Conditions: 150 mM KOAc, 10 mM MgCl2 and 150 mM bicine (pH 8.5), 24 C. This 177-nucleotide RNA was probed chemically with 2A3 and DMS. The DMS profile rests on 5,861 reads. Values are in units of 0.01, from 0 to 300, in steps of 10. DMS adducts were read by reverse transcription with MarathonRT. Reactivities are given for positions 27 through 126.
RNA sequence: GGGAACGACUCGAGUAGAGUCGAAAAGAUAUGGAGCCAGUGGGACAUGCUUGGUGGUCGGAAACGACCAGAAGAGCAACAGCCCACAGGCUCCUAAGUCAAAGCGGAUUGGUUCGCCAAUCCGCAACCUAAACACAUGGUUCGCCAUGUGUUUAGGAAAAGAAACAACAACAACAAC
Reactivity to 2A3 in 0.01 (KOAc 150mM, MgCl2 10mM, bicine 150mM(pH8.5), 24C), signal-to-noise 5, nucleotides 027 to 126: g000a000u020a010u060g000g010a000g000c000c020a000g010u010g000g040g000a090c150a300u300g020c010u040u070g050g140u020g000g020u220c010g000g000a030a020a000c000g010a000c000c030a020g110a160a010g010a010g010c040a070a060c080a090g020c000c000c010a000c000a000g000g000c000u010c000c000u000a000a000g000u000c040a090a120a000g010c010g000g010a010u000u020g040g060u080u190c300g050c120c000a000a010u010c000c000g000c000a000a000
Reactivity to DMS in 0.01 (KOAc 150mM, MgCl2 10mM, bicine 150mM(pH8.5), 24C), signal-to-noise 5, nucleotides 027 to 126: g000a020u000a070u000g000g000a020g030c010c000a080g040u010g020g000g000a000c060a300u020g020c010u000u000g010g020u000g010g000u010c000g020g010a010a030a050c000g010a010c000c000a010g010a300a250g000a010g010c000a100a090c280a110g000c000c000c000a000c000a050g010g000c000u000c000c010u010a000a030g000u000c010a120a150a150g010c010g000g000a020u000u000g000g010u000u020c300g020c010c000a020a000u000c000c000g020c000a010a020